[RMDB]
RNA sequence: GGGAACGACUCGAGUAGAGUCGAAAAUCAGCCUGUUUGUCCACCUGUAACCCUCACCUCCAAGGCAGCACCUUUAACCACUACCCUCUACGCAUCUGAACUUCCCAAGGCUGUAGGAAGUUAACUAUUUAAAGGACAAAAUGUUCCAGCCUAAAUGGCUCUGUACCUAUUUCGAUAGGUACAGAGCAAAAGAAACAACAACAACAAC
Reactivity to DMS in 0.01 (KOAc 150mM, MgCl2 10mM, bicine 150mM(pH8.5), 24C), signal-to-noise 1, nucleotides 027 to 156: u000c050a090g020c030c010u000g000u000u020u000g010u000c050c010a230c020c030u040g000u000a100a100c020c010c030u000c030a110c080c000u000c000c030a080a090g000g020c010a090g000c030a210c030c020u000u000u000a130a160c040c040a060c020u000a080c020c010c030u000c010u010a080c060g020c040a070u000c070u000g010a060a070c020u010u000c000c000c030a100a090g000g000c020u000g030u000a210g000g020a040a120g020u000u000a030a160c050u000a140u000u000u010a110a110a080g000g000a100c010a080a010a050a100u020g010u000u000c020c020a060g000c040c020u000a040a040a120u020g020
Reactivity to 2A3 in 0.01 (KOAc 150mM, MgCl2 10mM, bicine 150mM(pH8.5), 24C), signal-to-noise 1, nucleotides 027 to 156: u040c010a020g020c020c040u050g040u020u080u090g080u000c000c000a030c090c010u040g050u110a100a100c030c010c050u070c030a050c010c000u000c040c020a010a020g030g020c020a020g020c000a050c010c000u060u060u080a030a040c040c000a020c060u040a050c000c000c000u020c000u070a050c030g060c060a010u030c010u110g040a020a060c020u020u020c000c000c000a010a010g000g000c000u000g020u040a040g000g020a040a030g060u090u050a040a040c000u000a090u050u200u130a160a090a000g000g000a000c010a030a150a030a040u120g000u050u050c000c000a000g020c000c000u040a100a130a090u120g040

An RNA of 207 nucleotides, treated with DMS and 2A3 and read out base by base.
It was measured as part of the RMDB library OK3TST.
The DMS profile rests on 2,710 reads.
For 2A3 the reverse transcriptase was SuperScript II with manganese.
The RNA was probed in 150 mM KOAc, 10 mM MgCl2 and 150 mM bicine (pH 8.5) at 24 C.